[RMDB]
Source: RMDB libraries RFM100 and RFMREP, as collected in RNAgym. An RNA of 177 nucleotides, treated with DMS and 2A3 and read out base by base. For 2A3 the reverse transcriptase was SuperScript II with manganese.

RNA sequence: GGGAACGACUCGAGUAGAGUCGAAAAACGAGCGAUUGUCAGGGGUAGCUUUCUGCGCUUUUCAAAAAUCGGAAGAAAUUUGUACCUUUUGAGACGAAGGUUUGUAUACCGAGGAACGUGUUUAAGCGCUCCACUUACUAUUCGUAGUAAGUGGAGCAAAAGAAACAACAACAACAAC
Reactivity to DMS in 0.01 (KOAc 150mM, MgCl2 10mM, bicine 150mM(pH8.5), 24C), signal-to-noise 3, nucleotides 027 to 126: a070c070g010a080g000c020g010a170u010u010g010u000c040a130g020g000g010g010u000a040g010c100u010u020u000c020u010g000c080g020c080u000u010u000u000c140a060a060a030a100a120u010c000g000g030a090a050g000a190a030a100u010u000u020g000u010a030c030c010u000u000u000u000g010a110g010a050c060g000a020a020g020g000u010u010u020g010u000a080u030a100c000c000g020a080g000g010a080a040c090g000u020g010u010u000u000a050a090g020c260
Reactivity to 2A3 in 0.01 (KOAc 150mM, MgCl2 10mM, bicine 150mM(pH8.5), 24C), signal-to-noise 4, nucleotides 027 to 126: a010c070g020a030g000c070g070a110u110u070g080u080c040a030g030g020g010g050u030a020g050c000u000u060u000c010u050g010c020g040c050u050u020u010u100c080a050a030a020a060a100u020c010g020g010a060a000g080a060a160a060u170u170u210g060u080a050c000c000u000u030u070u120g190a130g020a010c100g010a010a000g020g000u010u000u110g080u030a050u050a030c000c010g000a010g070g010a120a070c100g030u010g020u060u080u080a030a000g050c020